[RMDB]
RNA sequence: GGGAACGACUCGAGUAGAGUCGAAAACAGGUGGAGAAACAAAGCCCAUUAACUUGAAGUAAUAAAUGUGUGGCCCUGCAGCAGUGCAUCACCCAGACGAUUCAGUUGUUUGCCUUCACACUUCUCACACCUUAAGCAUCCAUUGACUCUGACUGGAUCAAGAAAUUCAAUUCGUUGAAUUUCUUGAAAAAGAAACAACAACAACAAC
Reactivity to 2A3 in 0.01 (KOAc 150mM, MgCl2 10mM, bicine 150mM(pH8.5), 24C), signal-to-noise 6, nucleotides 027 to 156: c070a000g020g000u020g020g050a030g020a070a080a020c080a080a100a030g040c030c030c030a070u120u120a060a070c060u070u120g100a100a030g050u120a060a160u100a140a140a110u110g040u010g010u030g040g010c000c040c030u040g000c010a030g000c000a020g060u020g050c010a030u040c010a050c010c070c010a020g030a100c070g040a060u070u070c040a030g030u030u000g030u080u140u050g030c010c000u050u090c040a050c010a030c070u020u010c020u010c010a150c010a010c050c000u010u030a070a010g020c010a030u020c020c010a030u030u120g040a090c030u020c040u110g040a070c020u040g030g020a010
Reactivity to DMS in 0.01 (KOAc 150mM, MgCl2 10mM, bicine 150mM(pH8.5), 24C), signal-to-noise 3, nucleotides 027 to 156: c080a070g020g060u010g000g010a120g010a110a080a110c050a110a110a110g000c020c020c050a130u000u000a040a080c040u000u000g010a070a150g000u010a090a150u000a040a070a070u000g020u010g020u000g040g010c010c030c000u000g020c040a050g020c090a090g040u010g000c030a070u000c030a070c030c020c000a130g020a110c100g010a150u010u000c070a060g000u000u000g030u000u000u000g020c010c040u000u000c030a090c080a070c050u000u000c020u000c010a080c050a040c020c040u000u010a040a130g010c090a070u000c010c030a120u000u010g000a090c050u000c040u010g010a170c040u000g000g000a300
An RNA of 207 nucleotides, treated with 2A3 and DMS and read out base by base.
Reactivities are given for positions 27 through 156.
The DMS profile rests on 6,441 reads.
Conditions: 150 mM KOAc, 10 mM MgCl2 and 150 mM bicine (pH 8.5), 24 C.
In probing experiments dimethyl sulfate is read out at A N1 and C N3, which are open when not base-paired.
2A3 adducts were read by reverse transcription with SuperScript II with manganese.